[RMDB]
RNA sequence: GGGAACGACUCGAGUAGAGUCGAAAAACAGCGUCUCUUUCUGUCACGCAACCUCUGUUGAGUUUGCGGCUGUCCCGAGAUAAUGCGCAUAUCUCCUUCUGGCUAACCUCAGCUGAGGCUCUGUUCGGUAUACGUGACCUUUCGAGGUCACGUAUACAAAAGAAACAACAACAACAAC
Reactivity to DMS in 0.01 (KOAc 150mM, MgCl2 10mM, bicine 150mM(pH8.5), 24C), signal-to-noise 2, nucleotides 027 to 126: a060c080a030g000c080g000u000c030u010c030u010u010u000c040u000g020u020c110a230c080g030c010a010a020c040c000u010c000u000g010u010u010g010a030g010u010u000u010g000c060g030g010c120u000g020u000c050c050c060g000a050g010a060u000a060a110u020g020c070g000c090a130u000a060u000c020u000c010c070u000u020c050u000g000g000c030u000a090a110c100c030u000c040a080g010c200u010g000a120g000g010c030u010c020u010g010u000u010c150g000
Reactivity to 2A3 in 0.01 (KOAc 150mM, MgCl2 10mM, bicine 150mM(pH8.5), 24C), signal-to-noise 2, nucleotides 027 to 126: a000c000a010g020c010g070u000c000u000c000u040u100u020c070u030g150u110c060a040c130g020c000a040a300c020c000u000c020u070g250u170u300g030a000g000u030u060u060g000c050g030g040c000u060g050u110c030c030c020g000a020g010a020u120a090a050u180g080c100g020c090a020u020a030u050c000u000c010c000u070u050c040u080g010g020c010u010a050a090c010c020u010c010a020g020c030u000g030a010g000g030c010u000c000u020g020u060u040c110g000